[RMDB]
Source: RMDB library OK1LIB, as collected in RNAgym. This 177-nucleotide RNA was probed chemically with 2A3 and DMS. The RNA was probed in 150 mM KOAc, 10 mM MgCl2 and 150 mM bicine (pH 8.5) at 24 C. For 2A3 the reverse transcriptase was SuperScript II with manganese. Values cover nucleotides 27 to 126.
RNA sequence: GGGAACGACUCGAGUAGAGUCGAAAAUAUUAAAUGGUGAUAUCUUUAUAGUCUCCAAGGGAGGUAUUGAAGGCCUAUGUCAGAAAAUGUGGACAAUGAUCUCUAUUUCUGUGAUCAUCCUCUCUUCUCACGUAACGAGAUUCGUCUCGUUACGUGAAAAAGAAACAACAACAACAAC
Reactivity to 2A3 in 0.01 (KOAc 150mM, MgCl2 10mM, bicine 150mM(pH8.5), 24C), signal-to-noise 4, nucleotides 027 to 126: u200a050u090u220a070a110a070u150g010g030u070g030a020u010a010u100c010u000u170u070a090u080a040g060u020c020u000c020c020a040a040g030g030g000a010g010g050u070a080u090u100g030a050a020g090g010c030c050u120a100u090g120u060c050a040g050a050a140a040a040u130g080u150g010g010a010c070a050a210u190g100a240u020c020u000c010u010a120u120u140u030c070u020g050u050g010a070u030c010a000u000c000c000u020c000u000c000u050u020c030
Reactivity to DMS in 0.01 (KOAc 150mM, MgCl2 10mM, bicine 150mM(pH8.5), 24C), signal-to-noise 2, nucleotides 027 to 126: u040a060u040u030a050a050a060u030g000g000u020g010a030u000a050u010c020u020u000u030a060u000a080g020u000c010u000c010c050a030a120g000g010g000a030g000g000u010a020u060u000g000a040a100g000g000c050c080u000a100u030g010u000c030a040g000a050a020a040a070u000g000u050g040g010a020c070a130a070u000g010a100u000c010u000c000u010a170u050u000u000c130u000g000u010g000a080u000c030a040u000c000c010u000c000u000c020u000u000c210